[RMDB]
RNA sequence: GGGAACGACUCGAGUAGAGUCGAAAAUAAACCCCUGAUACACUAACACUGUCUCGCUGUCCACAUAGCCUCUGCUGGGUUGGGUGGGGGAACAAAAUGCAAUUAAGGGGAGGAGAGAUGGGAGCAACCGAAGGAUAUUGUUCGCAAUAUCCUUCGGAAAAGAAACAACAACAACAAC
Reactivity to 2A3 in 0.01 (KOAc 150mM, MgCl2 10mM, bicine 150mM(pH8.5), 24C), signal-to-noise 1, nucleotides 027 to 126: u170a010a040a080c000c000c000c000u020g070a060u080a090c010a000c100u140a140a020c060a010c020u030g010u020c010u000c000g060c050u100g040u080c010c000a030c040a110u050a060g010c000c010u040c030u060g050c020u040g070g000g080u190u110g050g000g040u300g040g000g030g000g000a010a000c010a040a140a020a040u160g030c040a000a060u240u110a230a160g030g010g000g040a040g020g000a150g000a000g000a000u070g030g000g010a080g000c000a050a050
Reactivity to DMS in 0.01 (KOAc 150mM, MgCl2 10mM, bicine 150mM(pH8.5), 24C), signal-to-noise 1, nucleotides 027 to 126: u000a030a060a200c060c000c020c010u000g000a190u000a060c050a060c090u000a060a100c060a090c150u000g000u000c020u030c130g000c110u010g000u010c000c010a050c060a080u000a140g010c030c050u000c180u000g020c040u000g000g000g000u020u020g000g000g050u000g000g040g050g000g000a050a110c140a000a100a100a030u000g000c030a120a050u010u020a100a150g000g000g000g030a030g000g000a110g000a090g000a070u000g000g000g000a140g030c090a080a050